[RMDB]
RNA sequence: GGGAACGACUCGAGUAGAGUCGAAAAUGGUCCUCGGAGAGGUCCGGGCCUGACCUUUUGGUUGGCGCUAACGCCCGUCGGGCUGUUUUGGCGCUGUUCAGGCUGAGUGUUGUGGUCCGGCCGUUCGAUACAUCGUCAUUUUCGAAUGACGAUGUAUAAAAGAAACAACAACAACAAC
Reactivity to DMS in 0.01 (KOAc 150mM, MgCl2 10mM, bicine 150mM(pH8.5), 24C), signal-to-noise 4, nucleotides 027 to 126: u030g010g010u010c010c010u000c020g000g000a040g000a120g020g010u030c010c010g010g010g010c010c000u000g000a020c010c010u000u010u020u000g020g000u000u010g000g000c000g010c000u000a020a030c040g000c000c000c000g020u030c220g020g010g020c020u010g030u010u000u020u010g020g010c010g010c000u010g000u010u020c150a090g010g000c120u010g010a040g000u030g010u010u000g010u010g000g010u000c000c000g010g000c010c010g000u000u000c030g000
Reactivity to 2A3 in 0.01 (KOAc 150mM, MgCl2 10mM, bicine 150mM(pH8.5), 24C), signal-to-noise 6, nucleotides 027 to 126: u130g090g030u030c010c000u000c010g020g020a080g010a060g010g050u100c020c000g000g000g010c000c000u010g000a010c000c000u060u080u070u030g120g000u040u170g020g000c000g000c020u010a010a000c010g020c010c020c040g190u180c210g000g000g000c050u140g090u060u070u060u090g020g000c000g020c000u010g020u050u100c040a040g110g000c070u050g020a020g020u210g070u040u030g130u110g020g000u000c000c000g000g000c000c000g000u020u020c010g010
Chemical mapping of a 177-nucleotide RNA with DMS and 2A3.